[RMDB]
RNA sequence: GGGAACGACUCGAGUAGAGUCGAAAAGCCAGCAGCAGAGCGUCAGAAAAAAGACCGGUCGCGUUAAGCGAAAAAUGUUUGCGAAACUUAUUACCAGUCGUUUUUUGCAUAUCCGUGCCAGCCCGGAGCAGGCAUCAAUGGAAUUUUACGGCGGGAAGCCGCUAUUCAUAUUCGUAUGAAUAGCGGCAAAAGAAACAACAACAACAAC
Reactivity to DMS in 0.01 (KOAc 150mM, MgCl2 10mM, bicine 150mM(pH8.5), 24C), signal-to-noise 1, nucleotides 027 to 156: g030c030c030a240g000c050a100g040c030a050g000a140g050c070g020u000c050a170g030a010a050a130a130a130a060g010a070c050c000g050g000u000c030g020c090g000u010u030a070a210g000c010g000a010a010a050a240a080u000g010u000u010u010g020c000g000a120a070a070c050u020u000a070u000u000a080c010c010a080g010u000c010g080u000u000u000u000u000u000g010c030a060u020a110u000c040c080g030u000g040c000c000a080g000c010c080c120g000g010a190g030c030a080g010g020c020a050u010c070a030a090u000g000g020a050a080u000u000u000u010a080c030g010g000c000g010g000g010a090a210
Reactivity to 2A3 in 0.01 (KOAc 150mM, MgCl2 10mM, bicine 150mM(pH8.5), 24C), signal-to-noise 2, nucleotides 027 to 156: g060c020c040a000g000c010a000g000c000a030g020a010g070c050g000u020c030a020g170a200a190a000a030a010a000g010a040c010c010g050g050u050c040g000c010g010u050u150a110a040g000c010g070a090a090a000a000a000u040g020u050u080u130g000c010g010a060a060a030c020u090u110a080u050u170a210c010c010a060g000u030c010g000u000u020u000u000u060u050g030c020a040u060a090u190c030c030g030u060g040c000c000a020g020c030c020c070g120g000a070g000c010a010g000g000c010a000u040c010a000a050u030g030g050a020a010u060u070u050u090a040c020g020g000c030g000g010g020a010a010
Source: RMDB library OK3TST, as collected in RNAgym. Chemical mapping of a 207-nucleotide RNA with DMS and 2A3. DMS adducts were read by reverse transcription with MarathonRT. The DMS profile rests on 1,892 reads. Conditions: 150 mM KOAc, 10 mM MgCl2 and 150 mM bicine (pH 8.5), 24 C.